[RMDB]
RNA sequence: GGGAACGACUCGAGUAGAGUCGAAAAAGUUCCUAGGAGGCUAGAAGAGCCAACCAACAGAGAAGGGAAAGCAGUCUGUUCUGAACAUAGGGACAUAAGUUCAUUCAUGCCAAGUAUCUUUCCAGCACGUAUAUCCCUCGUUCGCGAGGGAUAUACGAAAAGAAACAACAACAACAAC
Reactivity to DMS in 0.01 (KOAc 150mM, MgCl2 10mM, bicine 150mM(pH8.5), 24C), signal-to-noise 1, nucleotides 027 to 126: a190g000u000u000c000c000u000a010g000g010a300g000g040c000u010a050g000a230a050g010a040g000c060c010a110a120c070c020a040a140c110a030g010a050g030a150a150g000g000g000a030a080a030g000c070a040g000u000c020u000g050u000u010c150u000g010a110a100c130a120u000a100g020g000g000a000c040a050u000a060a050g000u000u000c030a050u000u000c020a070u000g000c060c040a000a040g000u000a060u000c020u000u000u010c000c010a080g000c180a130
Reactivity to 2A3 in 0.01 (KOAc 150mM, MgCl2 10mM, bicine 150mM(pH8.5), 24C), signal-to-noise 1, nucleotides 027 to 126: a000g010u000u030c000c000u010a000g070g060a010g040g070c010u040a020g070a260a080g050a220g060c000c000a010a150c030c000a040a060c000a010g050a000g000a000a140g100g000g020a000a040a020g020c030a030g050u000c030u030g000u040u000c010u040g040a060a020c030a040u120a050g030g030g030a030c020a040u200a110a080g010u010u010c010a030u090u090c020a040u070g050c030c030a060a030g030u010a050u080c050u040u000u040c010c010a010g050c100a000